RNA sequence: GGGAACGACUCGAGUAGAGUCGAAAACUUCUUCACGCCGUAAACAGCGACUUCAGCCGAGUCCAUAGCUCGGUGAUCGAACGCACCAACCACGGAACUAAGACGCUUGUAGAGGCGAUCUUUAGCACUUACCCAACGGGUUCGCCCGUUGGGUAAGAAAAGAAACAACAACAACAAC
Reactivity to 2A3 in 0.01 (KOAc 150mM, MgCl2 10mM, bicine 150mM(pH8.5), 24C), signal-to-noise 2, nucleotides 027 to 126: c010u050u050c020u170u110c050a050c120g040c000c000g040u080a050a130a080c020a040g000c000g050a060c060u060u040c000a010g030c000c000g020a020g050u010c130c070a190u210a100g020c000u000c020g000g000u020g000a040u080c140g010a090a020c010g000c020a030c040c010a020a030c040c010a020c070g050g010a090a030c030u010a010a000g020a020c020g050c060u170u210g080u280a080g060a070g150g000c030g020a030u000c010u030u080u060a080g030c010a010
Reactivity to DMS in 0.01 (KOAc 150mM, MgCl2 10mM, bicine 150mM(pH8.5), 24C), signal-to-noise 1, nucleotides 027 to 126: c230u010u000c000u000u000c090a150c150g020c020c040g030u000a090a100a050c200a120g000c000g000a080c080u010u010c120a160g010c020c000g000a030g040u000c060c230a110u000a170g000c000u000c010g000g010u000g020a060u010c060g000a030a110c030g000c030a070c090c070a040a080c180c110a000c030g000g000a140a140c070u030a050a060g010a080c010g060c010u000u000g000u000a050g010a120g020g010c000g010a140u010c000u000u000u000a050g000c210a150